[RMDB]
This 207-nucleotide RNA was probed chemically with 2A3 and DMS.
The data come from the RNA Mapping Database (RMDB), library M2RFPK.
RNA sequence: GGGAACGACUCGAGUAGAGUCGAAAAGCGUAACGGCUGGGUGUAACCCACCUCUAGGUGUGCUGAUUAGCGGGCUUGACUCCGUAACAAAUAGGCACUGGUGGUAAAAAGCAUCCCACCUACUCACAAAGCUCCAAAUUCUUCGGAAUUUGGAGAACCAAAAUCAUAAGUUCGCUUAUGAUUUUGGAAAAGAAACAACAACAACAAC
Reactivity to 2A3 in 0.01 (KOAc 150mM, MgCl2 10mM, bicine 150mM(pH8.5), 24C), signal-to-noise 5, nucleotides 027 to 156: g040c010g010u040a040a060c060g030g020c120u040g000g020g000u000g010u050a050a080c020c010c000a010c000c020u120c130u160a180g060g050u070g020u020g110c000u010g030a130u040u050a030g020c000g000g010g020c040u110u180g020a100c030u020c040c000g000u020a040a000c020a040a080a050u160a040g030g000c010a030c050u070g020g000u000g000g010u040a120a100a030a020a010g020c010a030u100c020c010c010a020c010c000u040a050c020u040c030a080c050a090a110a030g020c000u000c000c000a010a000a010u000u000c010u020u060c140g090g000a010a010u010u000u010g000g000a000g000a000a000
Reactivity to DMS in 0.01 (KOAc 150mM, MgCl2 10mM, bicine 150mM(pH8.5), 24C), signal-to-noise 1, nucleotides 027 to 156: g030c070g010u000a090a150c120g000g000c100u010g020g020g000u000g030u020a090a220c230c040c010a010c020c020u000c050u010a050g040g060u000g010u000g000c000u010g000a160u000u010a180g060c040g000g000g020c050u020u010g000a080c100u000c020c020g050u010a070a230c120a080a060a110u010a080g020g010c020a000c040u010g010g010u000g000g030u000a040a030a070a070a250g000c030a060u000c020c000c010a070c030c010u000a080c030u000c080a090c050a110a100a160g000c020u000c000c000a020a030a000u000u000c000u000u020c300g030g010a020a020u000u000u000g020g010a030g030a010a060